RNA sequence: GGGAACGACUCGAGUAGAGUCGAAAAGAUAUGGAGCGUGAACUACUCCAAACGCGGAUCGGAAACGAUCCGAACUACGGUAGGAGCACGCUCCUAAGUCAAAGAGAAUGACUUCGGUCAUUCUCAAGAAAGAAAUUCAGUUCGCUGAAUUUCUUUCAAAAGAAACAACAACAACAAC
Reactivity to DMS in 0.01 (KOAc 150mM, MgCl2 10mM, bicine 150mM(pH8.5), 24C), signal-to-noise 4, nucleotides 027 to 126: g000a040u010a300u000g010g010a010g000c000g040u000g000a060a100c030u010a160c010u000c020c050a030a110a280c300g010c000g000g000a000u000c000g020g010a110a090a130c020g000a000u000c000c000g000a010a020c080u000a120c300g000g000u000a060g010g000a120g000c000a010c010g010c000u000c000c000u010a010a060g000u000c010a050a060a090g000a010g000a030a000u000g000a010c010u000u020c200g020g000u000c000a000u000u000c010u000c000a020a050
Background:
Source: RMDB library TTRDEL, as collected in RNAgym. Structure probing data (DMS) for a 177-nucleotide construct. The reactions ran in a buffer of 150 mM KOAc, 10 mM MgCl2 and 150 mM bicine (pH 8.5), at 24 C.